Structure probing data (DMS and 2A3) for a 177-nucleotide construct. 2A3 adducts were read by reverse transcription with SuperScript II with manganese. The RNA was probed in 150 mM KOAc, 10 mM MgCl2 and 150 mM bicine (pH 8.5) at 24 C. The DMS profile rests on 107,091 reads. Source: RMDB library OK1LIB, as collected in RNAgym.
RNA sequence: GGGAACGACUCGAGUAGAGUCGAAAAGCUAGGGAGCGCACGAUGCCAGUGCCCUGACGUCUAGGCUGCGUCUCAACUAGUCUGAGUCAAUUAAAACGCUGGCGGUGAAGUACGGGACUAGUACACAGUGUUAGCAGUAGUUCGCUGCUGUUAACACAAAAGAAACAACAACAACAAC
Reactivity to DMS in 0.01 (KOAc 150mM, MgCl2 10mM, bicine 150mM(pH8.5), 24C), signal-to-noise 9, nucleotides 027 to 126: g010c020u000a040g000g000g010a240g000c050g010c050a040c060g010a120u020g000c010c010a020g000u000g000c070c070c060u010g000a040c020g010u020c040u030a040g010g000c020u000g010c130g000u010c100u030c130a070a070c070u010a020g010u000c010u010g000a150g000u010c020a060a100u040u030a050a070a100a180c050g000c010u000g000g000c010g000g010u010g000a080a080g000u010a050c050g010g000g010a130c030u000a040g010u000a080c120a110c190a120
Reactivity to 2A3 in 0.01 (KOAc 150mM, MgCl2 10mM, bicine 150mM(pH8.5), 24C), signal-to-noise 9, nucleotides 027 to 126: g020c010u020a010g010g020g010a040g030c030g000c000a000c010g050a030u080g000c000c010a000g000u010g020c010c000c020u010g000a010c010g100u020c040u080a020g010g020c010u010g010c030g100u010c020u000c050a020a050c010u040a000g010u000c010u010g020a010g020u020c010a010a040u090u130a070a040a000a010c020g000c010u010g000g000c010g000g010u050g030a090a020g030u040a020c020g010g010g030a020c010u010a010g030u040a020c070a000c010a040